[RMDB]
RNA sequence: GGGAACGACUCGAGUAGAGUCGAAAAAAGCCAAACACAAACAGCGGAAACGCCUUAAGUCCAGCUGUAAGAGACACCCUUUGUACGUGGACUUCAGUGACGUGGGGUGGAAUGACUGGAUUGUGGCCUAAGUCUGGCCUUUCGAGGCCAGACUUAGAAAAGAAACAACAACAACAAC
Reactivity to DMS in 0.01 (KOAc 150mM, MgCl2 10mM, bicine 150mM(pH8.5), 24C), signal-to-noise 1, nucleotides 027 to 126: a130a050g010c070c000a120a000a010c050a080c270a080a110a010c070a050g000c020g000g020a170a000a070c100g020c000c030u020u220a040a030g000u000c000c050a000g000c000u000g040u000a020a030g040a060g000a190c020a000c000c050c000u050u030u000g000u000a000c090g060u000g010g010a120c120u050u020c080a160g030u040g000a020c020g050u000g000g000g010g020u010g000g030a110a060u070g020a020c050u040g000g000a010u000u070g060u000g000g000c020
Reactivity to 2A3 in 0.01 (KOAc 150mM, MgCl2 10mM, bicine 150mM(pH8.5), 24C), signal-to-noise 2, nucleotides 027 to 126: a000a000g100c080c010a040a080a040c030a030c030a100a070a000c010a000g000c000g130g010a080a000a030c050g000c000c000u060u150a050a050g040u010c000c000a000g050c040u210g080u250a010a070g040a000g060a150c000a000c000c020c000u000u060u260g050u090a040c100g020u050g020g200a040c020u140u160c180a120g000u070g150a040c030g030u020g000g050g060g020u010g020g050a160a110u230g100a210c030u020g040g000a070u030u090g090u050g060g000c030
Source information: This 177-nucleotide RNA was probed chemically with DMS and 2A3. The RNA was probed in 150 mM KOAc, 10 mM MgCl2 and 150 mM bicine (pH 8.5) at 24 C. DMS (dimethyl sulfate) methylates the pairing face of unpaired adenines and cytosines. Values are in units of 0.01, from 0 to 300, in steps of 10.